Structure probing data (DMS and 2A3) for a 177-nucleotide construct.
RNA sequence: GGGAACGACUCGAGUAGAGUCGAAAAAGAAUCUCCUUCGGGAGAUUCUGAACCACUAAGCUGAUUGCGGAUGACGACGAGGCAGGUCGUGUCGAGCAACCACCGAGAACAGGUUCGCCUGUUCUAACACUAUGAUAAGGUUCGCCUUAUCAUAGUGAAAAGAAACAACAACAACAAC
Reactivity to DMS in 0.01 (KOAc 150mM, MgCl2 10mM, bicine 150mM(pH8.5), 24C), signal-to-noise 9, nucleotides 027 to 126: a010g000a020a000u000c000u000c000c000u000u010c190g030g010g010a010g000a000u000u000c000u000g000a090a220c010c000a120c220u010a080a100g020c140u000g010a030u000u000g010c020g000g010a070u000g010a030c030g010a030c020g010a120g020g020c200a070g010g010u000c020g010u000g010u000c010g010a160g020c020a020a030c020c010a040c120c110g000a040g010a010a010c010a010g000g010u000u010c220g020c000c000u000g000u000u000c000u000a070a190
Reactivity to 2A3 in 0.01 (KOAc 150mM, MgCl2 10mM, bicine 150mM(pH8.5), 24C), signal-to-noise 9, nucleotides 027 to 126: a000g000a010a000u000c000u010c000c020u020u090c190g100g000g000a000g000a000u000u000c000u000g000a000a010c010c000a040c120u120a080a060g070c080u040g060a100u030u050g010c020g020g040a040u110g230a040c030g010a000c010g030a100g160g210c120a060g030g160u020c020g000u010g010u030c030g030a050g050c010a010a020c010c020a030c030c080g160a020g000a030a000c000a010g010g040u030u060c170g060c040c000u000g000u000u000c000u000a010a010

Notes:
For 2A3, 42,388 sequencing reads were counted. The RNA was probed in 150 mM KOAc, 10 mM MgCl2 and 150 mM bicine (pH 8.5) at 24 C. Values cover nucleotides 27 to 126.